Chemical mapping of a 177-nucleotide RNA with DMS and 2A3. DMS adducts were read by reverse transcription with MarathonRT. The reactions ran in a buffer of 150 mM KOAc, 10 mM MgCl2 and 150 mM bicine (pH 8.5), at 24 C. For 2A3, 1,060 sequencing reads were counted. The data come from the RNA Mapping Database (RMDB), library OK2TST.
[RMDB]
RNA sequence: GGGAACGACUCGAGUAGAGUCGAAAAGGCCUGCCUGAAGCUGGGGCUGGAUCUGGAGUCUGCCGAAUUUCAGGACCUGAACAAACACAUCGCCGAGGUGAUGCUGCUGUCGGCGAUGAAGACCAGCUCCAUAGAGCGCGUUCGCGCGCUCUAUGGAAAAAGAAACAACAACAACAAC
Reactivity to DMS in 0.01 (KOAc 150mM, MgCl2 10mM, bicine 150mM(pH8.5), 24C), signal-to-noise 1, nucleotides 027 to 126: g010g020c050c010u000g030c040c020u000g000a090a080g020c070u020g000g030g000g000c010u000g000g020a060u000c030u000g020g010a090g000u010c010u000g010c130c110g000a080a040u010u030u000c030a050g020g000a090c030c000u020g010a110a120c180a050a130a130c140a100c010a000u000c020g000c000c000g000a300g000g050u000g000a060u020g020c140u000g030c010u000g000u000c020g040g010c010g000a020u000g000a090a080g010a080c020c020a020g000c080
Reactivity to 2A3 in 0.01 (KOAc 150mM, MgCl2 10mM, bicine 150mM(pH8.5), 24C), signal-to-noise 1, nucleotides 027 to 126: g070g010c000c010u020g010c000c030u050g090a080a020g000c040u030g000g000g010g050c020u040g030g010a160u000c020u050g020g050a050g080u020c030u080g140c040c070g080a140a140u070u050u070c000a030g000g000a010c000c000u030g030a070a030c050a090a040a000c010a030c000a090u000c000g000c010c010g030a010g100g000u080g010a260u240g060c050u090g020c000u100g150u300c020g000g000c020g000a010u010g000a000a000g060a000c000c000a010g060c010